[RMDB]
RNA sequence: GGGAACGACUCGAGUAGAGUCGAAAAGCGUACUACUCCGUUUGACGUAACUGGGAGAGCCUGCUAAUCUUAUUCCCAAAUAGGAAUAAGACAACAGGCUCGAAGAACAGUUACCGAGGAGUAUCGCAAAAGUGUAUACCGUUCGCGGUAUACACAAGUAUCAACGGAUGUUCGCAUCCGUUGAUACAAAAGAAACAACAACAACAAC
Reactivity to DMS in 0.01 (KOAc 150mM, MgCl2 10mM, bicine 150mM(pH8.5), 24C), signal-to-noise 2, nucleotides 027 to 156: g010c020g030u000a050c070u000a010c000u000c000c030g040u000u000u010g050a160c090g000u000a010a030c020u000g000g010g020a300g000a030g040c000c000u000g040c000u010a230a140u000c010u000u000a010u000u000c000c000c040a060a200a240u010a020g000g040a000a000u000a000a020g040a080c020a020a050c000a020g000g000c000u000c010g000a060a070g020a200a200c020a080g000u000u000a000c000c010g000a120g020g010a060g020u000a010u010c010g000c000a040a050a100a180g010u000g000u010a000u000a000c000c000g030u010u010c300g030c050g040g050u000a000u020a000c010a000c020a040a100
Reactivity to 2A3 in 0.01 (KOAc 150mM, MgCl2 10mM, bicine 150mM(pH8.5), 24C), signal-to-noise 2, nucleotides 027 to 156: g000c000g030u110a110c050u000a000c000u000c010c010g120u060u130u300g090a060c030g010u030a000a000c000u020g000g030g010a060g010a000g000c010c010u040g000c110u130a110a110u020c000u000u000a020u020u010c010c010c000a120a270a190u280a080g010g000a000a000u000a000a000g000a000c010a050a000c020a030g000g000c000u000c000g000a010a000g000a030a020c000a000g000u000u000a000c010c010g010a050g010g000a010g000u000a000u210c030g000c000a000a060a010a110g000u000g020u000a000u000a000c030c010g020u050u030c300g020c020g080g020u000a000u000a000c000a000c000a010a010
This 207-nucleotide RNA was probed chemically with DMS and 2A3.
It was measured as part of the RMDB library RNAMAK.
The reactions ran in a buffer of 150 mM KOAc, 10 mM MgCl2 and 150 mM bicine (pH 8.5), at 24 C.